[RMDB]
RNA sequence: GGGAACGACUCGAGUAGAGUCGAAAAGACCAUAAAUGUUUGAGUGGUUCAAUAGCAAAUUGGUUAAAAUAAUCUACAUUCUGUGAAAUGUACCACCAGUUUGAAACAUAGAAUAUAGCUGCAAUAGACAUAUCAAACACUUCGGUGUUUGAUAUGUAAAAGAAACAACAACAACAAC
Reactivity to DMS in 0.01 (KOAc 150mM, MgCl2 10mM, bicine 150mM(pH8.5), 24C), signal-to-noise 3, nucleotides 027 to 126: g000a180c020c020a100u020a110a120a070u010g000u000u000u020g010a150g030u000g000g010u000u010c050a070a050u010a170g020c020a020a010a030u000u000g000g000u000u000a040a050a100a130u000a090a040u000c090u000a030c030a020u000u000c060u010g020u020g000a050a060a040u000g010u000a020c300c140a030c000c000a050g000u000u000u000g010a080a040a080c080a040u000a100g000a060a070u000a100u010a100g010c080u000g000c080a050a060u010a050g010
Reactivity to 2A3 in 0.01 (KOAc 150mM, MgCl2 10mM, bicine 150mM(pH8.5), 24C), signal-to-noise 2, nucleotides 027 to 126: g020a000c000c010a010u190a070a180a050u210g110u050u090u140g110a110g040u020g020g000u010u050c030a040a080u070a070g030c010a060a000a040u140u060g030g000u080u080a100a120a060a090u200a060a090u080c030u030a030c040a050u020u010c000u090g240u010g120a210a020a000u040g000u000a020c000c000a010c000c000a000g030u000u080u120g110a070a060a020c020a040u120a040g130a080a060u160a070u050a130g030c100u090g010c000a020a090u080a070g150
Chemical mapping of a 177-nucleotide RNA with DMS and 2A3.
Reactivities are given for positions 27 through 126.
The 2A3 profile rests on 900 reads.
It was measured as part of the RMDB library OK2TRN.
The RNA was probed in 150 mM KOAc, 10 mM MgCl2 and 150 mM bicine (pH 8.5) at 24 C.